[RMDB]
RNA sequence: GGGAACGACUCGAGUAGAGUCGAAAAGAAAAGGCAAAUCUAAAGAACAGAGUAGAUUCGUGGUUCCCUAGGGAGGAAGUAGAAUUGAGAAAUAACUGCAAAUGAAUACAAAGUUUCUUCUGGAAUGGAACUGUUCUAAAAUAAGACGGUGGUGACACGAUGGUGUGAGUUUCGACUCACACCAUCGAAAAGAAACAACAACAACAAC
Reactivity to 2A3 in 0.01 (KOAc 150mM, MgCl2 10mM, bicine 150mM(pH8.5), 24C), signal-to-noise 2, nucleotides 027 to 156: g040a010a050a000a000g040g000c040a070a030a020u040c060u120a090a070a060g040a020a090c070a090g050a060g100u050a000g020a080u020u080c080g010u060g040g000u020u070c030c000c020u010a020g010g000g030a040g000g020a010a000g010u090a070g030a110a130u080u080g090a090g040a060a180a000u110a020a030c050u060g010c000a030a030a160u120g050a050a020u120a110c010a000a170a000g010u000u030u030c010u050u030c050u060g020g000a030a040u040g080g000a050a010c000u020g010u080u000c020u140a050a000a150a150u090a030a030g030a010c010g010g010u070g000g000u010g020a030c030a030
Structure probing data (2A3) for a 207-nucleotide construct. 2A3 adducts were read by reverse transcription with SuperScript II with manganese. The RNA was probed in 150 mM KOAc, 10 mM MgCl2 and 150 mM bicine (pH 8.5) at 24 C.